An RNA of 177 nucleotides, treated with DMS and 2A3 and read out base by base. It was measured as part of the RMDB library M2PK50. For DMS, 3,403 sequencing reads were counted. Reactivities are given for positions 27 through 126. The reactions ran in a buffer of 150 mM KOAc, 10 mM MgCl2 and 150 mM bicine (pH 8.5), at 24 C.
[RMDB]
RNA sequence: GGGAACGACUCGAGUAGAGUCGAAAACAGUAUGCCUUCGGGCAUACUGAAACCAGACGGUAUCUGGCCCACGCUCCCAUGCGUGCCGGGAAUCCCAUCCCAAAACGGAUGUCUUCGGACAUCCGAACAGUACAUGGGAGUUCGCUCCCAUGUACUGAAAAGAAACAACAACAACAAC
Reactivity to DMS in 0.01 (KOAc 150mM, MgCl2 10mM, bicine 150mM(pH8.5), 24C), signal-to-noise 5, nucleotides 027 to 126: c010a020g010u010a000u010g000c000c000u000u010c170g020g020g010c000a000u000a000c000u010g010a040a030a120c010c010a030g000a090c180g010g000u010a300u000c020u010g010g000c300c060c000a070c020g010c000u000c160c080c130a080u010g000c030g020u000g010c210c090g000g010g000a050a050u000c020c010c020a140u000c010c010c030a040a040a050a160c010g000g010a000u010g000u000c000u000u010c240g010g010a010c000a000u000c000c000g000a020a060
Reactivity to 2A3 in 0.01 (KOAc 150mM, MgCl2 10mM, bicine 150mM(pH8.5), 24C), signal-to-noise 5, nucleotides 027 to 126: c000a000g010u010a000u010g010c000c010u060u120c300g100g000g030c010a000u010a000c000u010g000a010a000a000c020c010a010g020a040c120g180g080u200a090u090c010u020g040g000c030c030c000a000c000g000c010u140c020c050c020a050u200g000c010g030u010g050c050c040g000g000g010a010a040u030c000c010c000a020u020c000c010c000a040a050a000a030c020g000g000a000u000g000u000c000u030u080c190g110g000a000c000a000u010c000c000g000a020a020